[RMDB]
RNA sequence: GGGAACGACUCGAGUAGAGUCGAAAAACGCGGUCGAGGCGUCACGUUUGCCAAUGCUGGCGUACGGUGGCGCCCGUGUCACGCGACGACGUCACAAUCGGCAUCGAUAUCGGCACCACCGCCGUCACGUUGGCACUACUUUCGAGUAGUGCCAACGAAAAGAAACAACAACAACAAC
Reactivity to DMS in 0.01 (KOAc 150mM, MgCl2 10mM, bicine 150mM(pH8.5), 24C), signal-to-noise 2, nucleotides 027 to 126: a190c080g010c040g050g010u000c110g000a140g020g000c000g030u000c010a030c010g000u000u030u010g010c000c060a000a140u020g020c210u000g020g010c010g020u010a030c000g030g010u000g000g000c010g000c000c000c000g010u000g000u000c090a090c050g000c150g010a110c050g020a020c000g030u000c070a110c120a140a080u000c090g000g010c000a060u020c000g000a100u000a080u000c090g030g010c020a050c030c250a060c060c040g010c100c010g030u000c160a130
Reactivity to 2A3 in 0.01 (KOAc 150mM, MgCl2 10mM, bicine 150mM(pH8.5), 24C), signal-to-noise 2, nucleotides 027 to 126: a010c050g010c010g000g060u120c060g040a160g010g040c010g000u050c010a000c030g000u000u070u180g010c020c040a110a130u300g070c180u060g110g020c010g050u080a030c000g060g120u010g000g000c000g050c010c040c000g020u020g010u020c070a070c000g130c010g000a050c000g010a020c050g030u070c030a090c070a160a130u100c060g020g030c020a040u060c050g040a020u030a020u100c020g020g000c030a010c040c000a040c000c030g010c020c000g010u020c030a020